[RMDB]
RNA sequence: GGGAACGACUCGAGUAGAGUCGAAAAACAUUCGAAUGCCUUCCAUUCGGAAAUCCAUUCCCAUCAAUCAAGUGGCUUAAGGAUGGACUUGAGCUGUUCUCUGAUGAAAAGAUCAAGAUGGAAGCUACAGUACCGAUUAGUUCGCUAAUCGGUACUGAAAAGAAACAACAACAACAAC
Reactivity to DMS in 0.01 (KOAc 150mM, MgCl2 10mM, bicine 150mM(pH8.5), 24C), signal-to-noise 3, nucleotides 027 to 126: a130c220a120u010u000c060g000a060a040u000g010c140c030u000u000c070c000a100u010u000c010g000g000a050a060a070u000c080c070a150u000u000c070c010c010a130u000c150a060a040u020c110a070a070g030u000g000g010c030u000u000a030a050g010g000a100u010g000g010a200c030u000u010g000a000g020c000u000g000u000u000c020u000c170u010g010a070u000g010a030a060a100a040g000a030u000c020a080a090g000a070u000g000g000a050a030g000c050u000a120
Reactivity to 2A3 in 0.01 (KOAc 150mM, MgCl2 10mM, bicine 150mM(pH8.5), 24C), signal-to-noise 3, nucleotides 027 to 126: a000c020a080u100u140c040g010a140a040u040g030c000c010u030u000c010c000a000u110u120c020g020g040a020a050a000u010c030c020a040u060u040c000c030c010a020u030c020a020a090u040c010a060a030g030u030g050g000c010u010u030a010a010g040g090a150u290g110g100a190c020u020u020g000a000g010c000u010g080u130u010c050u000c040u040g010a030u020g010a050a030a020a030g050a030u050c040a040a020g010a040u020g010g000a010a000g010c000u040a040
Chemical mapping of a 177-nucleotide RNA with DMS and 2A3. The reactions ran in a buffer of 150 mM KOAc, 10 mM MgCl2 and 150 mM bicine (pH 8.5), at 24 C. The data come from the RNA Mapping Database (RMDB), library OK2TRN. For DMS, 2,579 sequencing reads were counted.